[RMDB]
RNA sequence: GGGAACGACUCGAGUAGAGUCGAAAAAACUCCAAAAGCACACAAGUACCUAUUGUUUGUCCGCCAAACCCCAAAAACGGAACUAGAUACAUGCAGCAUUUAUGAAAUUACUCGCAUUAAAUUAUGCAUAUCUGGGAAUAUUCGUAUUCCCAGAUAUAAAAGAAACAACAACAACAAC
Reactivity to 2A3 in 0.01 (KOAc 150mM, MgCl2 10mM, bicine 150mM(pH8.5), 24C), signal-to-noise 1, nucleotides 027 to 126: a000a000c040u010c020c000a030a130a000a000g020c000a010c000a010c000a000a060g070u020a010c000c020u050a050u060u040g040u120u020u040g050u030c010c020g000c030c010a130a050a110c020c020c000c000a000a130a060a030a000c020g010g050a040a020c020u020a050g030a110u090a050c030a060u090g020c000a010g000c000a030u040u070u030a160u150g070a080a030a050u130u070a110c020u020c070g000c010a000u150u070a070a120a250u240u110a050u050g000c000
Reactivity to DMS in 0.01 (KOAc 150mM, MgCl2 10mM, bicine 150mM(pH8.5), 24C), signal-to-noise 3, nucleotides 027 to 126: a090a030c090u010c020c020a030a090a090a100g000c040a040c040a060c050a030a050g020u000a040c060c040u000a100u000u000g010u010u000u010g000u000c020c050g030c060c040a030a090a140c060c000c000c050a010a070a040a080a050c070g000g000a040a070c080u010a040g000a080u010a060c100a060u000g010c010a050g000c090a050u010u000u000a040u020g000a040a040a080u000u010a040c090u010c110g010c020a010u000u000a030a060a080u010u010a050u000g000c060